Chemical mapping of a 177-nucleotide RNA with 2A3 and DMS. For 2A3 the reverse transcriptase was SuperScript II with manganese. It was measured as part of the RMDB library OK2TRN. Conditions: 150 mM KOAc, 10 mM MgCl2 and 150 mM bicine (pH 8.5), 24 C.
RNA sequence: GGGAACGACUCGAGUAGAGUCGAAAAUUGAGUACUUAAAACAAAAUUACCCUAGGAUAUCUGGUAGAUUGUCUAUCGGUACCUAUGUAGCGAAUACAUGGUGGCAAAUCAGUCCUGGCGGUAUGACCACGUCUGCUCAAUUCGUUGAGCAGACGUGAAAAGAAACAACAACAACAAC
Reactivity to 2A3 in 0.01 (KOAc 150mM, MgCl2 10mM, bicine 150mM(pH8.5), 24C), signal-to-noise 1, nucleotides 027 to 126: u090u090g090a030g020u150a150c120u110u260a120a110a100a000c090a010a200a100a140u050u020a010c000c000c000u010a000g000g020a020u000a060u130c040u070g000g000u040a010g000a080u110u300g120u180c020u020a050u040c020g030g020u020a010c010c000u020a020u030g010u000a030g060c150g140a220a090u000a000c020a010u000g030g020u120g070g000c060a040a050a180u060c050a030g060u050c040c040u020g040g010c120g010g040u030a050u060g020a000c060
Reactivity to DMS in 0.01 (KOAc 150mM, MgCl2 10mM, bicine 150mM(pH8.5), 24C), signal-to-noise 1, nucleotides 027 to 126: u000u010g010a200g000u010a030c140u000u030a050a110a130a090c050a040a070a100a080u010u000a040c000c010c000u000a050g000g000a000u000a050u010c030u000g070g000u000a030g000a300u010u000g000u000c000u010a020u010c010g000g010u010a050c020c030u040a010u000g010u000a010g000c160g000a080a070u000a010c000a010u000g000g010u010g000g030c170a030a100a100u000c270a120g010u000c000c000u000g000g000c100g000g000u000a000u000g000a090c140
For 2A3, 880 sequencing reads were counted.